[RMDB]
The data come from the RNA Mapping Database (RMDB), library OK1LIB. An RNA of 177 nucleotides, treated with 2A3 and read out base by base. The 2A3 profile rests on 486 reads.
RNA sequence: GGGAACGACUCGAGUAGAGUCGAAAAACCGUCGAGUACCAAGAGAAGGUACACGACGGAAUCACAACAUCUCAGUUGUGGAAAUUGGUUUGGGCCAAUAAAACCCAUGAAAUCAAGGAAACUUGAAGCUCAGAUGUCUCUUCGGAGACAUCUGAGCAAAAGAAACAACAACAACAAC
Reactivity to 2A3 in 0.01 (KOAc 150mM, MgCl2 10mM, bicine 150mM(pH8.5), 24C), signal-to-noise 1, nucleotides 027 to 126: a000c000c000g000u000c000g000a010g000u000a020c030c030a220a000g090a050g040a300a300g060g000u020a010c090a010c050g000a000c000g000g000a000a040u040c000a080c020a010a000c030a080u060c140u030c160a040g000u000u000g000u000g000g110a000a000a210u000u000g000g110u110u070u070g100g000g000c020c030a090a020u120a250a130a000a040c000c150c000a000u040g030a020a030a000u120c030a020a000g070g000a000a000a090c020u000u000g050a040a080